[RMDB]
RNA sequence: GGGAACGACUCGAGUAGAGUCGAAAAGAUAUGGAUCCAGAACAGGGAGUUCUGUCGGAAACGACUGAACAUCGAUCUGUUUAGGAUCCUAAGUCAAAACCAAGGACCAGUUCGCUGGUCCUUGGAAGUGUAGUCUGAAGUUCGCUUCAGACUACACAAAAGAAACAACAACAACAAC
Reactivity to DMS in 0.01 (KOAc 150mM, MgCl2 10mM, bicine 150mM(pH8.5), 24C), signal-to-noise 2, nucleotides 027 to 126: g000a010u010a100u010g010g000a010u000c010c010a300g020a000a000c000a010g010g010g030a090g010u000u000c000u000g010u010c000g030g010a000a050a110c000g000a010c010u010g000a010a000c000a120u000c070g000a050u000c010u000g010u010u000u000a170g020g010a000u000c000c000u000a020a070g000u000c020a080a020a200a220c000c000a000a020g010g000a010c000c000a000g020u000u020c300g010c010u000g010g000u000c000c000u000u010g000g000a010a050
Reactivity to 2A3 in 0.01 (KOAc 150mM, MgCl2 10mM, bicine 150mM(pH8.5), 24C), signal-to-noise 2, nucleotides 027 to 126: g030a010u020a010u070g000g010a010u020c000c030a080g030a040a000c000a000g300g300g040a000g010u010u010c010u030g020u010c010g000g010a010a020a020c010g000a010c020u010g000a000a000c000a130u120c020g060a240u070c000u000g000u000u010u070a130g020g010a000u000c000c000u000a010a020g000u000c020a000a010a080a170c000c000a000a020g020g000a010c010c000a020g010u090u120c190g160c170u000g000g040u020c000c000u010u000g000g000a010a010
An RNA of 177 nucleotides, treated with DMS and 2A3 and read out base by base. DMS adducts were read by reverse transcription with MarathonRT. For DMS, 1,645 sequencing reads were counted. 2A3 adducts were read by reverse transcription with SuperScript II with manganese. Source: RMDB library TTRDEL, as collected in RNAgym.